[RMDB]
RNA sequence: GGGAACGACUCGAGUAGAGUCGAAAAGAAUCUCACUUGGGCGGGUGCUUUAGUGACUCCAGCGCGUAUUAGUGAGAUGGGGAUUUAUGUUAUGAAUACGUUGAAAUGAUUACGCGCAAAGUAAGAAGGGUAUUGUAAAGUUCGCUUUACAAUACCCAAAAGAAACAACAACAACAAC
Reactivity to 2A3 in 0.01 (KOAc 150mM, MgCl2 10mM, bicine 150mM(pH8.5), 24C), signal-to-noise 4, nucleotides 027 to 126: g050a020a100u070c010u000c010a000c000u020u040g020g030g050c050g090g150g100u300g060c000u090u090u140a070g050u080g060a030c010u000c020c010a050g020c000g000c010g000u000a010u020u070a030g010u010g010a030g000a020u020g010g010g000g000a000u020u110u000a090u070g220u140u120a130u140g080a030a010u050a010c020g010u060u040g030a030a080a020u070g020a060u020u060a020c000g020c000g010c030a000a020a100g170u100a030a050g060a110a070
Reactivity to DMS in 0.01 (KOAc 150mM, MgCl2 10mM, bicine 150mM(pH8.5), 24C), signal-to-noise 3, nucleotides 027 to 126: g010a160a130u060c100u010c030a020c040u010u010g000g000g000c030g010g000g020u050g000c010u020u000u000a070g000u000g000a060c050u010c040c060a190g000c020g050c000g000u000a010u000u070a120g000u000g000a260g000a000u010g000g000g000g020a050u020u000u000a010u010g010u030u030a060u000g010a030a020u010a050c070g020u000u000g000a140a070a040u030g010a030u010u010a000c020g000c020g000c000a080a040a050g000u040a050a110g030a080a180
Structure probing data (2A3 and DMS) for a 177-nucleotide construct. The 2A3 profile rests on 2,359 reads. For DMS, 6,328 sequencing reads were counted. The RNA was probed in 150 mM KOAc, 10 mM MgCl2 and 150 mM bicine (pH 8.5) at 24 C.